[RMDB]
Structure probing data (2A3 and DMS) for a 170-nucleotide construct. For DMS, 28,403 sequencing reads were counted. The RNA was probed in 150 mM KOAc, 10 mM MgCl2 and 150 mM bicine (pH 8.5) at 24 C.

RNA sequence: GGGAACGACUCGAGUAGAGUCGAAAAUCUGGCCGCUGAGACACAUAGGGAUUGUGAUUUUAAUAAACCACUCAUUGAGUGGCCACUUACUGAGUAUGAUUUUACUGAUUAUAAGGUACAACUCUUUAGCGCCUGAAGUUCGCUUCAGGCAAAAGAAACAACAACAACAAC
Reactivity to 2A3 in 0.01 (KOAc 150mM, MgCl2 10mM, bicine 150mM(pH8.5), 24C), signal-to-noise 9, nucleotides 027 to 129: u030c010u010g030g010c020c000g000c060u050g020a010g030a040c010a000c010a070u110a050g060g040g050a100u080u050g030u020g070a090u030u060u070u130a140a130u130a060a090a030c010c000a010c010u010c030a250u080u260g030a000g010u000g000g010c010c010a050c010u070u110a040c020u010g010a000g030u070a120u150g070a110u060u070u060u080a030c020u010g020a020u050u130a100u080a200a000g010g000u010a020c020a040a050c040u010c000u050u030u090a110g040c050
Reactivity to DMS in 0.01 (KOAc 150mM, MgCl2 10mM, bicine 150mM(pH8.5), 24C), signal-to-noise 6, nucleotides 027 to 129: u010c060u020g020g010c040c000g070c130u030g010a130g030a110c110a060c050a050u030a000g020g020g010a090u050u020g040u000g000a120u000u000u000u000a070a110u060a080a140a180c050c030a030c000u010c000a140u010u020g030a000g000u020g010g020c080c050a040c110u020u020a000c000u040g010a040g000u040a110u040g020a120u040u020u030u000a030c080u000g010a080u010u000a070u060a060a170g030g000u000a040c100a000a000c060u000c000u000u000u000a070g030c120